[RMDB]
RNA sequence: GGGAACGACUCGAGUAGAGUCGAAAAGAGUGGGGGCAACAAUGUGGUGGAAUGUUGGGUCCAUCUUGAUGGAUGGGCUUGAAGGGCUAAUGUUCUGGCCUGCCCUGUCCAAGCACAGAGUUGGGUCAAGUGGUCUAUACGAAAGUAUAGCCACUUGCUCCUGAUCCUUCUUCGGAAGGAUCAGGAGAAAAGAAACAACAACAACAAC
Reactivity to 2A3 in 0.01 (KOAc 150mM, MgCl2 10mM, bicine 150mM(pH8.5), 24C), signal-to-noise 1, nucleotides 027 to 156: g080a020g000u120g010g000g060g000g000c000a050a050c000a080a000u100g000u030g000g030u030g040g040a090a010u050g050u050u080g060g000g010u000c000c000a030u030c050u080u230g130a160u260g010g010a000u000g020g000g000c000u000u030g040a040a040g030g000g000c080u090a130a090u170g030u050u080c050u030g040g000c000c010u020g000c000c010c000u020g000u060c030c030a080a010g010c020a030c000a030g040a000g040u040u070g050g010g000u050c000a000a000g000u000g010g000u000c010u040a000u000a000c020g090a070a050a040g000u000a000u000a010g000c030c000a000c000u000u000g010

Chemical mapping of a 207-nucleotide RNA with 2A3. Values cover nucleotides 27 to 156. The reactions ran in a buffer of 150 mM KOAc, 10 mM MgCl2 and 150 mM bicine (pH 8.5), at 24 C.